[RMDB]
RNA sequence: GGGAACGACUCGAGUAGAGUCGAAAAAAUUCAGCUUUGAAUAUAUGUUUUGACAUACGCGAUAAUUGUUCAUUGGAGAAGUUCAUGUCUACUCCCAAUGCCAUCUUUAUUUCUGAUAGAAAAAUCAUACGAAUGCUGUUCGCAGCAUUCAAAAGAAACAACAACAACAAC
Reactivity to 2A3 in 0.01 (KOAc 150mM, MgCl2 10mM, bicine 150mM(pH8.5), 24C), signal-to-noise 9, nucleotides 027 to 129: a000a000u090u050c030a010g070c100u170u150u110g020a030a000u090a020u020a030u110g090u060u080u030u070g040a010c030a020u040a030c030g010c010g060a020u010a100a030u100u050g030u090u050c000a030u020u040g070g030a130g020a130a030g010u040u070c050a040u160g060u010c030u030a030c020u010c010c000c000a010a010u030g010c020c020a060u030c080u040u150u040a140u040u090u000c060u040g070a070u030a080g230a030a100a020a000a010u090c060a010u020a090c070
Reactivity to DMS in 0.01 (KOAc 150mM, MgCl2 10mM, bicine 150mM(pH8.5), 24C), signal-to-noise 6, nucleotides 027 to 129: a020a020u010u000c020a000g040c200u060u060u030g030a030a040u000a000u000a060u000g000u000u000u000u000g010a060c000a050u020a020c090g000c050g030a010u050a000a040u030u010g010u040u040c000a060u040u000g030g040a080g000a070a000g020u010u030c160a020u080g030u000c040u020a110c090u040c040c030c000a060a050u080g040c270c060a090u040c050u040u010u020a030u030u010u010c100u040g020a100u030a090g000a020a060a030a030a040u000c050a060u000a090c230
Record summary:
An RNA of 170 nucleotides, treated with 2A3 and DMS and read out base by base. 2A3 adducts were read by reverse transcription with SuperScript II with manganese. Reactivities are given for positions 27 through 129. The reactions ran in a buffer of 150 mM KOAc, 10 mM MgCl2 and 150 mM bicine (pH 8.5), at 24 C.